[RMDB]
RNA sequence: GGGAACGACUCGAGUAGAGUCGAAAAUGCAAGAAAGGAGCAACUGCUGUUGGAACUGUGGAGAGAAUACUUAAUGCUGGUUAUAACACAGAGGACGCAACUGCGCCUGACUUUGCUUUGCUCUCCGAUACCACUCCCGGUUCGCCGGGAGUGGUAUAAAAGAAACAACAACAACAAC
Reactivity to 2A3 in 0.01 (KOAc 150mM, MgCl2 10mM, bicine 150mM(pH8.5), 24C), signal-to-noise 1, nucleotides 027 to 126: u010g000c000a000a000g030a110a040a000g060g000a070g000c040a100a000c140u170g000c090u140g000u040u000g000g110a000a230c000u090g000u000g030g000a110g000a000g030a120a050u000a070c000u040u060a090a090u240g030c110u100g000g000u030u000a000u000a300a090c140a000c000a010g030a090g000g160a000c000g000c270a300a160c040u040g000c000g060c000c000u010g000a040c110u130u180u270g000c000u060u090u000g000c060u000c000u000c010c010g000
Reactivity to DMS in 0.01 (KOAc 150mM, MgCl2 10mM, bicine 150mM(pH8.5), 24C), signal-to-noise 1, nucleotides 027 to 126: u000g040c020a000a000g010a000a170a040g000g010a100g000c010a010a230c190u000g030c000u020g050u000u000g000g000a110a200c030u000g020u000g020g010a050g050a210g030a150a000u100a010c050u000u040a010a020u100g000c190u010g000g060u000u000a020u000a050a120c030a010c000a020g010a150g010g010a010c020g030c010a020a120c080u000g000c000g010c020c000u010g050a300c050u000u000u050g000c030u000u010u000g000c000u000c020u050c000c150g000